Notes:
Conditions: 150 mM KOAc, 10 mM MgCl2 and 150 mM bicine (pH 8.5), 24 C. This 177-nucleotide RNA was probed chemically with 2A3 and DMS. Values cover nucleotides 27 to 126. For 2A3, 4,906 sequencing reads were counted. For DMS, 1,925 sequencing reads were counted. Source: RMDB library M2PK90, as collected in RNAgym.

[RMDB]
RNA sequence: GGGAACGACUCGAGUAGAGUCGAAAAAUAAAGCAACGCGAGCAACGCGAGCAACGCGAGCAACGCGAGCAACGCGAGCAACGCCAGCAACGCGAGCAACGCGAGCAACGCGAGCAACGCGAAAAAACUCUACAUAGAAGUUCGCUUCUAUGUAGAGAAAAGAAACAACAACAACAAC
Reactivity to 2A3 in 0.01 (KOAc 150mM, MgCl2 10mM, bicine 150mM(pH8.5), 24C), signal-to-noise 4, nucleotides 027 to 126: a000u100a020a070a010g040c040a070a120c020g010c010g040a040g060c050a110a230c010g000c000g010a030g030c030a060a230c030g010c000g020a040g000c020a130a170c000g000c010g020a000g000c020a060a070c030g000c000g030a050g120c050a120a160c030g020c020c040a010g020c030a100a190c020g000c000g000a040g050c030a090a210c020g010c000g030a010g000c040a100a210c020g020c000g000a020g030c030a110a130c030g000c000g070a080a000a000a000a000a010
Reactivity to DMS in 0.01 (KOAc 150mM, MgCl2 10mM, bicine 150mM(pH8.5), 24C), signal-to-noise 3, nucleotides 027 to 126: a030u050a080a110a140g010c150a110a130c010g030c020g010a280g010c000a160a080c020g010c010g000a210g010c010a180a100c010g020c010g020a170g000c070a120a110c010g010c020g020a240g020c030a150a100c130g010c010g020a200g030c170a100a110c030g030c010c240a200g000c020a050a030c010g000c000g000a150g000c010a060a050c030g020c010g000a170g000c030a100a060c040g020c000g000a200g000c000a110a060c000g020c010g010a000a070a060a080a070a050